An RNA of 177 nucleotides, treated with DMS and 2A3 and read out base by base. The 2A3 profile rests on 2,928 reads. The RNA was probed in 150 mM KOAc, 10 mM MgCl2 and 150 mM bicine (pH 8.5) at 24 C. For DMS the reverse transcriptase was MarathonRT. For 2A3 the reverse transcriptase was SuperScript II with manganese.
RNA sequence: GGGAACGACUCGAGUAGAGUCGAAAAAUAUUGGUGUAUCAAUGGUCACGAAAGCCACGCUCACUGCACUGAAAAUGGCCAGCAGUGAUACCAGUCCAAUGAUUGCUGACGAGUUGAUCAAAAACAGCACUAUAACAACCUUCGGGUUGUUAUAGUGAAAAGAAACAACAACAACAAC
Reactivity to DMS in 0.01 (KOAc 150mM, MgCl2 10mM, bicine 150mM(pH8.5), 24C), signal-to-noise 5, nucleotides 027 to 126: a060u000a080u000u000g020g010u010g020u000a070u010c070a090a090u010g010g010u000c020a060c090g020a140a160a160g020c040c040a020c090g000c250u000c040a040c080u010g010c090a090c130u010g000a030a020a180a100u000g000g010c040c020a050g000c120a090g000u000g000a040u000a030c030c050a090g010u000c040c060a030a060u000g010a060u000u000g010c030u000g010a080c110g010a070g010u010u000g010a050u010c050a050a060a060a080a060c220a120g000
Reactivity to 2A3 in 0.01 (KOAc 150mM, MgCl2 10mM, bicine 150mM(pH8.5), 24C), signal-to-noise 3, nucleotides 027 to 126: a000u220a050u060u070g040g000u050g020u060a050u140c050a060a050u090g050g000u020c030a000c090g080a130a010a000g010c040c040a040c050g070c020u040c020a050c070u090g000c040a050c060u030g060a070a040a050a110u090g040g000c000c020a010g010c020a000g040u020g040a000u030a050c020c010a030g070u000c010c020a020a030u090g060a070u020u160g040c040u040g030a050c040g030a000g090u110u090g070a050u040c060a010a120a000a010a050c030a030g030